This 177-nucleotide RNA was probed chemically with 2A3 and DMS. Reactivities are given for positions 27 through 126. The DMS profile rests on 29,514 reads. The reactions ran in a buffer of 150 mM KOAc, 10 mM MgCl2 and 150 mM bicine (pH 8.5), at 24 C. For DMS the reverse transcriptase was MarathonRT.

[RMDB]
RNA sequence: GGGAACGACUCGAGUAGAGUCGAAAAUUUAUGGAGAGUUUGAUCCUGGCUCAGGACGAACGCUGGCGGCGUGCCUAAUACAUGCAAGUCGAGCGGACAAUUGAGAGCUUGCUCUCAAUUGUUAGCGAAAGGAUAUACUGUUCGCAGUAUAUCCUUUAAAAGAAACAACAACAACAAC
Reactivity to 2A3 in 0.01 (KOAc 150mM, MgCl2 10mM, bicine 150mM(pH8.5), 24C), signal-to-noise 4, nucleotides 027 to 126: u070u050u020a110u110g060g020a060g000a010g090u040u050u140g120a180u060c000c020u040g080g090c080u080c120a020g000g030a020c020g010a050a010c030g020c040u040g040g040c000g020g010c020g010u020g000c000c010u050a090a020u150a110c050a030u080g040c020a010a070g030u050c030g050a020g030c040g020g000a000c010a010a000u010u010g000a000g000a010g000c040u070u100g020c010u030c000u020c000a000a000u000u000g000u010u010a010g000c010g060
Reactivity to DMS in 0.01 (KOAc 150mM, MgCl2 10mM, bicine 150mM(pH8.5), 24C), signal-to-noise 9, nucleotides 027 to 126: u010u010u010a090u010g010g010a130g010a080g010u000u000u000g010a120u000c010c010u000g010g020c140u010c050a080g010g010a060c050g010a040a070c050g020c040u000g010g010c040g010g000c030g020u000g010c030c070u000a080a090u000a160c100a050u000g010c060a060a090g010u000c060g010a110g010c010g000g010a010c000a000a010u000u000g000a020g000a010g010c030u010u000g010c000u000c000u000c000a000a010u000u000g000u000u000a080g020c050g000